[RMDB]
RNA sequence: GGGAACGACUCGAGUAGAGUCGAAAAGUGAAAGCUCCUUCUAUCGCAAUGUGUAACUCAUGAUUCUCAUGACCCCUGGUUGGAGAGAUCCGGACUAGGAGCCAGGGGGCCUCUGAUUCUGCCAGCCAAAACUGUCGUAAGUUCGCUUACGACAGAACAUACCUGAGGGAUUCGUCCCUCAGGUAUGAAAAGAAACAACAACAACAAC
Reactivity to DMS in 0.01 (KOAc 150mM, MgCl2 10mM, bicine 150mM(pH8.5), 24C), signal-to-noise 1, nucleotides 027 to 156: g020u000g000a060a100a090g000c020u000c000c000u000u000c040u000a070u000c050g040c090a100a070u010g030u000g020u000a090a080c100u010c010a090u000g000a120u000u000c040u000c010a080u000g000a090c000c030c000c010u000g020g000u000u000g020g000a130g020a200g000a170u000c020c020g000g020a160c030u000a040g030g030a110g000c000c000a060g000g020g040g030g020c040c020u000c060u000g010a110u020u000c070u000g000c040c020a100g000c040c010a040a100a070a100c000u010g020u010c000g010u020a010a020g010u020u000c270g010c000u010u000a020c020g000a020c010a000g000a010a060
Reactivity to 2A3 in 0.01 (KOAc 150mM, MgCl2 10mM, bicine 150mM(pH8.5), 24C), signal-to-noise 5, nucleotides 027 to 156: g070u080g040a110a020a010g030c020u030c020c000u080u070c040u080a090u110c060g010c080a070a110u090g040u060g010u120a060a060c020u010c050a030u050g040a140u220u030c080u020c060a030u090g050a090c000c010c000c010u000g010g030u040u100g050g030a070g010a020g010a090u030c030c020g030g090a110c070u100a080g060g010a000g020c000c010a010g000g010g000g000g000c000c000u020c020u030g050a100u080u040c010u070g030c040c020a030g010c040c000a050a120a060a090c010u000g010u010c000g000u000a010a000g000u010u090c200g020c150u010u000a000c000g000a000c000a000g000a000a010